[RMDB]
RNA sequence: GGGAACGACUCGAGUAGAGUCGAAAACGUACCGUACAGAGAGAAGAAAAGGGGCAUAUUUCCCUGCUUGCAGCGAUGCGAGCAAAACAAAAAUUUCCAUGAAUACGGUUAGUAGCAAAAGCAAAGGUAGAAGCAGGUGAUUCGUCACCUGCUUCUAAAAAGAAACAACAACAACAAC
Reactivity to 2A3 in 0.01 (KOAc 150mM, MgCl2 10mM, bicine 150mM(pH8.5), 24C), signal-to-noise 2, nucleotides 027 to 126: c000g030u020a060c000c000g000u010a000c110a000g120a000g010a000g020a110a050g020a030a090a010a030g010g010g030g010c040a050u040a160u180u110u190c000c000c000u000g000c000u000u030g030c020a020g020c000g120a070u030g000c010g000a030g000c000a000a000a020a000c090a050a040a000a000a100u000u140u000c000c000a020u050g030a100a080u060a020c020g000g000u050u070a000g050u010a050g010c020a000a100a140a040g000c030a020a100a050g110g000
Reactivity to DMS in 0.01 (KOAc 150mM, MgCl2 10mM, bicine 150mM(pH8.5), 24C), signal-to-noise 2, nucleotides 027 to 126: c040g020u000a080c010c000g000u000a040c000a200g000a100g000a130g050a140a090g000a070a060a030a090g050g000g000g000c300a030u000a080u010u040u000c000c000c060u050g000c000u000u070g000c000a000g020c300g050a080u010g000c000g010a010g020c010a050a040a080a100c200a000a080a140a020a150u080u000u000c030c070a000u000g000a190a100u000a010c010g000g020u020u020a150g000u030a040g020c140a040a040a150a130g000c140a000a060a050g000g070